Chemical mapping of a 177-nucleotide RNA with 2A3 and DMS. The reactions ran in a buffer of 150 mM KOAc, 10 mM MgCl2 and 150 mM bicine (pH 8.5), at 24 C. It was measured as part of the RMDB library OK2TRN.

[RMDB]
RNA sequence: GGGAACGACUCGAGUAGAGUCGAAAACAGGACCAAAUGGGUCCCCAGCCAGCCGUGUUCAAUGUCUAGACCAGUCCUUCAUUGCUGAUUUUAGGCUGAGAGGAACGUGCGUUUGCCCCUCCUCCGCCGAGUAUGGCUAUUUCGAUAGCCAUACUCGAAAAGAAACAACAACAACAAC
Reactivity to 2A3 in 0.01 (KOAc 150mM, MgCl2 10mM, bicine 150mM(pH8.5), 24C), signal-to-noise 3, nucleotides 027 to 126: c040a010g030g000a010c010c030a050a060a300u290g150g000g010u000c000c020c000c010a030g040c000c020a000g020c000c030g060u050g000u060u040c040a020a070u100g040u000c030u030a030g020a070c020c010a010g050u070c050c000u150u110c090a200u120u190g000c020u020g060a210u080u050u060u120a040g020g000c030u060g060a100g000a020g090g080a070a010c040g060u070g040c000g010u070u080u140g040c000c030c000c010u020c000c010u010c000c000g010c020
Reactivity to DMS in 0.01 (KOAc 150mM, MgCl2 10mM, bicine 150mM(pH8.5), 24C), signal-to-noise 4, nucleotides 027 to 126: c170a140g030g010a070c020c020a070a110a140u000g020g020g010u010c010c010c030c080a080g010c030c060a080g010c020c020g020u010g010u000u000c060a060a110u010g010u000c020u000a070g000a060c040c020a050g010u000c110c050u020u000c150a080u000u010g010c020u010g010a080u000u000u000u000a080g020g010c020u010g010a280g010a030g010g000a060a030c090g000u000g010c030g010u010u000u000g020c030c020c020c020u000c010c010u000c010c020g020c160